[RMDB]
RNA sequence: GGGAACGACUCGAGUAGAGUCGAAAAUUAAUCCGGCUUUAAGUUGACGAGGGCAGGGUUUAUCGAGACAUCGGCGGGUGCGCUGCGGUCUUCCUGCGACCGUUAGAGGACUGGUAAACCAAUUUAACAAAAAGGUUUCUUUCGAGAAACCUUUUUGAAAAGAAACAACAACAACAAC
Reactivity to DMS in 0.01 (KOAc 150mM, MgCl2 10mM, bicine 150mM(pH8.5), 24C), signal-to-noise 1, nucleotides 027 to 126: u010u010a080a140u020c020c010g000g000c040u010u000u000a050a100g020u030u000g000a040c040g010a080g030g010g010c020a040g010g010g020u000u000u000a090u010c180g000a090g010a040c060a050u000c030g010g050c030g010g000g000u000g000c030g010c020u000g040c110g000g010u000c020u010u010c040c030u010g010c050g010a070c030c010g010u000u000a100g010a110g000g000a070c030u000g000g000u010a030a050a170c030c030a070a110u010u000u010a110a190